[RMDB]
Description:
An RNA of 177 nucleotides, treated with DMS and 2A3 and read out base by base. The reactions ran in a buffer of 150 mM KOAc, 10 mM MgCl2 and 150 mM bicine (pH 8.5), at 24 C. It was measured as part of the RMDB library TTRDES. 2A3 adducts were read by reverse transcription with SuperScript II with manganese.
RNA sequence: GGGAACGACUCGAGUAGAGUCGAAAAGAUAUGGAUGUGUCAAGGGAGCUCAGAUGUCGGAAACGACAUCGAGCGAGGAUCUUGCACAUCCUAAGUCAAAGCGUGAUGUUCUUCGGAACAUCACGCACACCAAAUUUCACUUCGGUGAAAUUUGGUGAAAAGAAACAACAACAACAAC
Reactivity to DMS in 0.01 (KOAc 150mM, MgCl2 10mM, bicine 150mM(pH8.5), 24C), signal-to-noise 1, nucleotides 027 to 126: g020a010u000a210u000g000g010a010u000g000u000g000u010c010a000a000g010g020g020a120g000c000u010c000a250g070a000u000g010u000c000g000g000a090a080a100c000g000a040c000a000u000c010g000a000g020c010g000a070g000g010a100u030c000u020u000g000c000a010c010a000u010c000c000u020a010a110g010u000c010a060a180a190g010c000g040u000g000a010u010g050u000u010c000u000u040c300g040g010a000a000c000a000u000c000a000c020g050c010a050
Reactivity to 2A3 in 0.01 (KOAc 150mM, MgCl2 10mM, bicine 150mM(pH8.5), 24C), signal-to-noise 1, nucleotides 027 to 126: g000a020u020a000u120g000g010a000u020g020u030g230u300c060a010a020g060g060g000a220g050c030u060c110a140g020a060u000g020u000c010g000g050a090a030a000c000g000a000c000a020u000c020g000a000g020c030g020a040g050g000a090u000c000u000u000g000c000a000c000a000u000c000c000u010a020a000g030u030c060a140a160a080g000c020g000u000g000a000u000g000u010u010c000u100u080c300g030g000a020a000c010a000u000c000a020c000g000c030a010